[RMDB]
RNA sequence: GGGAACGACUCGAGUAGAGUCGAAAAUGGGCCGUGUGCUUAACCAGGACAAGAUCUCCUUCUCUCCAACGUUGAUGCCAACUCAUGAUUCUCCUAACCUGUGCUUGGAGAGACGUGGACCCAGAGUAAAACGAAGGGUGCUUCGGCACCCUUCGAAGAUUUUGGCUUAGUUCGCUAAGCCAAAAUCAAAAGAAACAACAACAACAAC
Reactivity to DMS in 0.01 (KOAc 150mM, MgCl2 10mM, bicine 150mM(pH8.5), 24C), signal-to-noise 1, nucleotides 027 to 156: u010g020g020g060c000c020g000u000g020u010g000c090u000u000a080a100c060c070a100g000g010a190c040a100a140g000a130u000c030u000c030c020u010u000c020u010c010u000c010c010a070a060c120g010u000u000g020a140u000g020c050c010a030a080c050u000c010a110u010g020a070u000u010c030u000c020c010u010a060a080c050c080u010g000u000g030c030u010u000g010g030a020g020a050g040a020c010g010u020g020g000a080c000c010c010a300g020a190g030u020a080a050a100a120c040g040a060a000g010g060g060u000g020c000u000u000c260g050g000c000a010c030c000c000u000u000c000g000a030a050
Reactivity to 2A3 in 0.01 (KOAc 150mM, MgCl2 10mM, bicine 150mM(pH8.5), 24C), signal-to-noise 2, nucleotides 027 to 156: u050g010g000g000c020c000g160u120g020u060g070c030u070u070a080a040c040c040a030g020g000a030c070a080a130g030a190u040c030u040c030c030u090u010c000u000c010u000c010c000a030a020c050g070u040u090g040a060u090g120c030c040a100a000c030u030c090a060u110g070a190u210u020c070u030c020c030u090a050a140c000c030u070g060u090g040c050u030u010g010g000a010g010a000g000a010c030g060u090g040g020a080c000c020c020a030g010a010g060u180a010a120a030a000c010g000a000a000g000g010g010u000g000c000u000u070c070g050g000c010a010c020c030c000u000u000c000g000a000a000
The record gives the reactivity of an RNA of 207 nucleotides to DMS and 2A3. It was measured as part of the RMDB library M2RFPK. The RNA was probed in 150 mM KOAc, 10 mM MgCl2 and 150 mM bicine (pH 8.5) at 24 C. 2A3 adducts were read by reverse transcription with SuperScript II with manganese. Reactivities are given for positions 27 through 156.